Conditions: 150 mM KOAc, 10 mM MgCl2 and 150 mM bicine (pH 8.5), 24 C. This 207-nucleotide RNA was probed chemically with 2A3 and DMS. Source: RMDB library OK3TST, as collected in RNAgym. 2A3 adducts were read by reverse transcription with SuperScript II with manganese. For DMS, 8,706 sequencing reads were counted.
[RMDB]
RNA sequence: GGGAACGACUCGAGUAGAGUCGAAAAAGCUGACAAGUAAGUGUGGAUUGAUGGGGCUGGUAGUUAGAAGGAAAAAGCUAGCAAUUGCUGUCUGAAUGUCUUCAGCCUGCUGAUUCCUUUUGGAACCAAAUUGAGGGGAUAAGUAACUUUGUGAGAAGCACUAAAUAAUGUUCGCAUUAUUUAGUGCAAAAGAAACAACAACAACAAC
Reactivity to 2A3 in 0.01 (KOAc 150mM, MgCl2 10mM, bicine 150mM(pH8.5), 24C), signal-to-noise 5, nucleotides 027 to 156: a000g020c030u040g040a030c070a090a040g070u130a080a050g010u020g020u060g050g050a070u060u120g030a060u060g020g000g030g010c060u030g030g010u010a020g040u050u090a030g010a040a020g010g040a030a040a010a010a000g030c070u110a020g020c090a120a220u180u150g010c020u010g020u110c040u060g100a190a100u180g050u040c060u030u020c030a000g010c000c010u030g000c010u000g000a040u020u020c000c000u020u030u040u050g030g030a040a020c000c010a030a090a060u080u060g020a050g000g030g010g020a010u030a110a010g040u010a050a040c050u030u130u140g020u020g040a060g030a120a010
Reactivity to DMS in 0.01 (KOAc 150mM, MgCl2 10mM, bicine 150mM(pH8.5), 24C), signal-to-noise 3, nucleotides 027 to 156: a110g010c050u010g020a120c080a080a150g020u000a050a090g020u010g020u000g000g010a160u000u000g000a080u010g020g010g030g030c020u000g020g020u000a070g010u000u000a080g020a080a080g020g000a040a030a060a180a080g010c030u010a040g020c050a100a110u000u000g010c020u000g000u010c040u020g020a100a110u000g010u010c060u000u000c050a130g010c030c080u000g020c060u000g010a300u000u000c000c010u000u000u010u000g030g020a060a100c040c030a020a040a130u000u010g000a110g010g000g030g000a080u000a030a060g010u000a070a060c080u010u010u000g040u010g010a140g000a170a250